[RMDB]
RNA sequence: GGGAACGACUCGAGUAGAGUCGAAAAUCUUAGCGUUUCGACGCUAAGAAAACGUGGUGGAGGAGGUGGAAAGCUCGGCAUUAAAGGGAUAUAAACAUCUUCAUAUAGGGUCGUUCGCGACCCUAAAUGUACUCCAUUAUUUCGAUAAUGGAGUACAAAAAGAAACAACAACAACAAC
Reactivity to DMS in 0.01 (KOAc 150mM, MgCl2 10mM, bicine 150mM(pH8.5), 24C), signal-to-noise 5, nucleotides 027 to 126: u000c000u010u000a000g000c000g010u000u000u020c160g020a030c000g010c000u000a000a000g000a010a040a070a110c140g030u010g010g020u010g010g010a100g000g010a060g010g020u010g000g000a060a070a100g010c070u000c080g010g010c080a070u000u000a030a080a100g010g000g000a070u000a090u010a070a080a070c170a060u000c040u000u000c120a100u000a140u000a010g000g000g010u000c000g010u000u010c200g010c000g000a020c000c000c000u000a000a010a050
Reactivity to 2A3 in 0.01 (KOAc 150mM, MgCl2 10mM, bicine 150mM(pH8.5), 24C), signal-to-noise 2, nucleotides 027 to 126: u050c010u010u000a000g000c000g000u010u050u110c210g050a000c000g000c000u010a000a000g010a010a000a000a010c060g090u100g010g050u100g030g040a070g020g020a050g040g000u070g030g000a040a030a010g010c030u040c080g060g000c030a020u030u170a080a070a040g040g000g000a000u030a010u040a130a110a010c050a100u040c020u160u080c060a050u110a010u050a200g010g010g010u010c000g000u020u030c150g010c000g050a000c020c000c000u000a000a000a000